Conditions: 150 mM KOAc, 10 mM MgCl2 and 150 mM bicine (pH 8.5), 24 C. The record gives the reactivity of an RNA of 207 nucleotides to 2A3. The 2A3 profile rests on 2,219 reads. 2A3 adducts were read by reverse transcription with SuperScript II with manganese.
[RMDB]
RNA sequence: GGGAACGACUCGAGUAGAGUCGAAAAAGCGAUGAUACGUCAUCGCAACGAUUGCCUGAUCGUAAAACAGGAGACGGCAGUGGCCGCGACCACGUAAAAAAGCGUAACGUGGUCUACGGACCACGAAAAAAGCGCGGAACGUUCGCGUUCCGCGCAAGAUCAAUAAUUGCUUCGGCAAUUAUUGAUCAAAAGAAACAACAACAACAAC
Reactivity to 2A3 in 0.01 (KOAc 150mM, MgCl2 10mM, bicine 150mM(pH8.5), 24C), signal-to-noise 2, nucleotides 027 to 156: a000g010c010g000a000u010g000a000u030a100c190g070u020c000a000u000c000g000c010a000a010c000g010a000u020u010g010c000c000u010g020a010u020c050g150u230a030a030a000a010c010a000g000g050a050g090a040c150g070g050c090a060g010u020g000g000c010c010g000c000g010a000c010c010a000c010g000u030a040a020a040a060a030a060g140c110g060u080a040a030c010g010u000g000g000u000c000u030a040c040g040g020a190c000c010a000c000g010a030a000a000a000a000a000g000c010g020c000g010g000a010a000c000g030u080u080c170g020c020g090u000u000c020c000g000c020g000c000a000a000